[RMDB]
RNA sequence: GGGAACGACUCGAGUAGAGUCGAAAACAUCUGCGCGACGUGCUGCGCAUGUCGGAAGAUCCGAAACGUCCGGAGCGUAAAAUUCAGUUCUUCGUGGCGGUUUAUCAGCAUCUGCGUGAACGUAUUAGAUUAUGAUAGCGUUCGCGCUAUCAUAAUCAAAAGAAACAACAACAACAAC
Reactivity to DMS in 0.01 (KOAc 150mM, MgCl2 10mM, bicine 150mM(pH8.5), 24C), signal-to-noise 4, nucleotides 027 to 126: c070a080u010c080u010g020c050g010c030g000a050c220g020u000g010c010u010g010c210g000c050a040u000g010u000c030g000g020a190a110g010a070u000c030c020g010a040a100a110c050g020u000c020c070g010g010a040g010c090g010u020a040a080a090a100u010u010c100a100g010u000u010c010u010u000c020g030u010g010g010c010g010g000u010u010u000a070u000c050a040g000c070a030u000c110u000g010c010g010u000g000a060a040c080g000u010a090u000u000a150
Reactivity to 2A3 in 0.01 (KOAc 150mM, MgCl2 10mM, bicine 150mM(pH8.5), 24C), signal-to-noise 3, nucleotides 027 to 126: c020a090u030c080u100g030c080g000c020g040a050c050g030u030g000c010u030g000c070g010c070a050u080g050u030c010g000g020a130a050g060a240u020c000c010g030a070a040a040c010g000u000c020c020g040g040a050g030c030g060u080a070a140a050a100u210u110c040a030g030u090u000c010u030u010c010g060u090g030g000c010g000g040u030u120u070a090u040c010a010g000c000a010u000c050u120g040c010g020u070g030a070a020c070g030u080a110u070u180a060

About this RNA
Structure probing data (DMS and 2A3) for a 177-nucleotide construct. For 2A3 the reverse transcriptase was SuperScript II with manganese. Reactivities are given for positions 27 through 126. 2A3 is a SHAPE reagent: it acylates the 2'-hydroxyl of flexible nucleotides of all four kinds. It was measured as part of the RMDB library OK2TST.